[RMDB]
RNA sequence: GGGAACGACUCGAGUAGAGUCGAAAAGCUCUGAGAGACAGAUCGAACAACAAAGAGAGAUCGAAAAUCUUAGGGGAGAGAACGAAUUUGUCGUCUUCUCUAGGACAUUGUCGAUCAGAUGUCCAAAGACCAAUGAUUGGUUCGCCAAUCAUUGGUCAAAAGAAACAACAACAACAAC
Reactivity to 2A3 in 0.01 (KOAc 150mM, MgCl2 10mM, bicine 150mM(pH8.5), 24C), signal-to-noise 3, nucleotides 027 to 126: g010c010u000c000u000g010a010g000a000g000a010c010a010g010a000u000c020g080a060a070c030a050a010c060a050a240a000g150a030g010a000g000a020u010c020g010a020a070a010a050u000c000u000u000a000g010g000g010g010a010g000a000g010a050a010c050g020a150a140u120u060u130g170u050c050g040u020c000u000u000c000u000c000u000a000g030g000a000c030a100u060u160g010u010c000g000a020u000c000a000g010a030u030g030u000c010c030a030a040a020
Reactivity to DMS in 0.01 (KOAc 150mM, MgCl2 10mM, bicine 150mM(pH8.5), 24C), signal-to-noise 2, nucleotides 027 to 126: g000c030u000c000u000g000a010g000a300g000a010c000a020g000a050u000c000g100a300a170c070a060a150c300a050a130a070g020a050g000a300g020a030u000c000g000a010a100a090a160u000c000u000u000a000g000g030g000g000a000g000a090g020a050a100c010g000a020a130u030u010u070g030u000c030g000u000c020u010u000c000u000c000u000a000g010g000a030c120a080u000u000g000u010c000g000a190u000c000a020g000a050u000g000u010c000c000a080a160a080

This 177-nucleotide RNA was probed chemically with 2A3 and DMS. For 2A3, 3,914 sequencing reads were counted. For 2A3 the reverse transcriptase was SuperScript II with manganese. For DMS, 2,084 sequencing reads were counted.